Chemical mapping of a 177-nucleotide RNA with 2A3. For 2A3 the reverse transcriptase was SuperScript II with manganese. The reactions ran in a buffer of 150 mM KOAc, 10 mM MgCl2 and 150 mM bicine (pH 8.5), at 24 C.

[RMDB]
RNA sequence: GGGAACGACUCGAGUAGAGUCGAAAACGCCAGUAACUGGCAACGCGCCGCCAGCCCCUCCGGACGCCACGAUUCAUUGGCGUCCACAAUGAGCGUCGCCUCCGGCACCGCCGAGCGGAUCGCCACCCACUCGACGGCCAUUCGUGGCCGUCGAGUGAAAAGAAACAACAACAACAAC
Reactivity to 2A3 in 0.01 (KOAc 150mM, MgCl2 10mM, bicine 150mM(pH8.5), 24C), signal-to-noise 1, nucleotides 027 to 126: c010g000c000c000a100g020u290a190a070c160u090g000g070c000a000a010c010g010c000g000c000c040g000c040c000a030g000c000c000c000c000u100c090c050g000g000a000c000g040c020c030a110c100g190a210u300u130c090a020u050u260g000g000c100g000u000c000c000a000c030a000a050u150g060a040g090c000g020u000c000g030c030c010u020c000c010g030g020c070a080c070c060g000c000c000g030a000g000c010g020g020a110u030c010g000c010c000a000c000c020